[RMDB]
Overview: An RNA of 177 nucleotides, treated with 2A3 and DMS and read out base by base. For DMS the reverse transcriptase was MarathonRT.

RNA sequence: GGGAACGACUCGAGUAGAGUCGAAAAGGAGGCCUUCUCCUCGGACGGUGGCCCCGAGGGCUUUUUAGAUGAUGAUGAGGACGAGGGCGCCCUGGACGGGGCAGGCAGGCUGAGGGAGCCCGAGUCAGAAUCAUUGCUUCUUCGGAAGCAAUGAUUCAAAAGAAACAACAACAACAAC
Reactivity to 2A3 in 0.01 (KOAc 150mM, MgCl2 10mM, bicine 150mM(pH8.5), 24C), signal-to-noise 3, nucleotides 027 to 126: g090g020a050g020g020c010c000u060u020c020u040c010c010u000c000g010g030a010c010g030g110u120g050g010c010c000c000c010g020a070g000g060g040c010u060u130u020u070u180a150g020a170u260g040a070u080g030a030u090g050a040g080g050a000c030g010a060g000g030g000c060g010c010c000c010u010g000g050a020c010g000g020g000g020c020a000g000g040c040a000g030g000c010u030g050a060g040g040g000a030g000c020c000c010g010a020g060u030c030a010
Reactivity to DMS in 0.01 (KOAc 150mM, MgCl2 10mM, bicine 150mM(pH8.5), 24C), signal-to-noise 5, nucleotides 027 to 126: g010g000a190g010g010c030c020u000u000c040u000c000c010u000c020g000g000a090c060g010g010u000g010g000c000c030c010c030g000a160g010g010g000c030u000u000u000u000u010a080g010a120u010g000a140u010g000a120u010g000a090g000g000a090c050g010a300g010g000g020c110g020c010c000c010u000g010g010a110c070g000g010g010g020c100a030g000g010c130a050g010g000c020u000g010a100g000g000g010a120g010c020c010c020g010a150g010u010c100a120